The record gives the reactivity of an RNA of 177 nucleotides to DMS and 2A3.
The reactions ran in a buffer of 150 mM KOAc, 10 mM MgCl2 and 150 mM bicine (pH 8.5), at 24 C.
Reactivities are rounded to 0.1 and cut off at 0 and 3.
The 2A3 profile rests on 2,807 reads.
DMS adducts were read by reverse transcription with MarathonRT.
RNA sequence: GGGAACGACUCGAGUAGAGUCGAAAAAAAGAUAUGGAAGUUAGGGAGAAGGUUUGUGCCAACAGCUUCGCUCGGAAACGAGCGAAGACAUGGCAUUAUCUUCUUUGAUCUAACUUCCUAAGUCAAAUCAACCUAGAAAGUUCGCUUUCUAGGUUGAAAAAGAAACAACAACAACAAC
Reactivity to DMS in 0.01 (KOAc 150mM, MgCl2 10mM, bicine 150mM(pH8.5), 24C), signal-to-noise 2, nucleotides 027 to 126: a080a110a060g000a020u010a300u000g010g020a010a030g000u000u000a000g020g000g000a040g000a000a010g010g000u000u010u010g030u000g000c000c000a030a060c300a200g030c000u010u000c000g010c000u000c000g000g000a120a090a180c000g010a010g000c000g000a010a020g000a020c080a120u000g010g030c000a000u000u000a010u000c000u000u010c000u000u000u040g000a080u010c000u000a010a000c000u000u000c000c000u000a010a070g010u000c060a090a050a190
Reactivity to 2A3 in 0.01 (KOAc 150mM, MgCl2 10mM, bicine 150mM(pH8.5), 24C), signal-to-noise 1, nucleotides 027 to 126: a000a020a030g080a070u130a090u120g000g000a010a010g000u010u000a000g010g010g050a040g000a000a020g090g020u180u300u280g050u050g030c010c010a060a050c110a250g030c020u000u020c000g000c010u010c000g000g040a060a100a090c030g000a000g020c020g010a000a010g030a000c000a050u070g000g000c000a000u000u040a000u020c000u010u000c030u190u060u020g000a010u040c000u000a000a000c010u010u000c000c000u010a030a000g000u000c000a010a030a080